[RMDB]
RNA sequence: GGGAACGACUCGAGUAGAGUCGAAAAGGCUGCUUUAAUUCAUCAAGUAGUGAAUUGUCUAUCCGAAAUCAUGUUUUCAGAGGCAUUGAGAUUGGCUGACUAUUACGACAGCAAUAGACCAGCCAUACACGACUAAUGGUUUCGACCAUUAGUCGUGAAAAGAAACAACAACAACAAC
Reactivity to 2A3 in 0.01 (KOAc 150mM, MgCl2 10mM, bicine 150mM(pH8.5), 24C), signal-to-noise 2, nucleotides 027 to 126: g040g020c010u010g010c020u100u130u160a160a090u180u060c060a060u060c080a100a030g000u050a000g010u110g090a010a090u020u050g040u040c010u050a080u060c020c050g000a030a050a070u120c100a070u080g100u060u080u080u040c050a060g040a060g150g000c040a040u150u100g050a050g010a110u090u050g010g000c010u000g010a040c000u020a030u060u080a060c080g090a080c070a040g060c040a030a000u010a000g100a150c010c020a000g000c000c000a010u040a020
Reactivity to DMS in 0.01 (KOAc 150mM, MgCl2 10mM, bicine 150mM(pH8.5), 24C), signal-to-noise 3, nucleotides 027 to 126: g010g020c020u000g010c080u000u010u010a070a080u010u010c080a050u010c120a130a140g030u000a090g020u000g000a020a040u000u000g010u000c010u000a150u010c060c040g000a030a040a110u000c120a070u000g010u000u000u000u010c160a090g010a110g010g000c010a030u000u000g010a080g020a180u000u000g010g000c060u010g000a090c020u000a070u000u000a090c050g010a140c300a070g040c050a060a010u000a010g000a090c100c000a020g000c010c010a080u000a060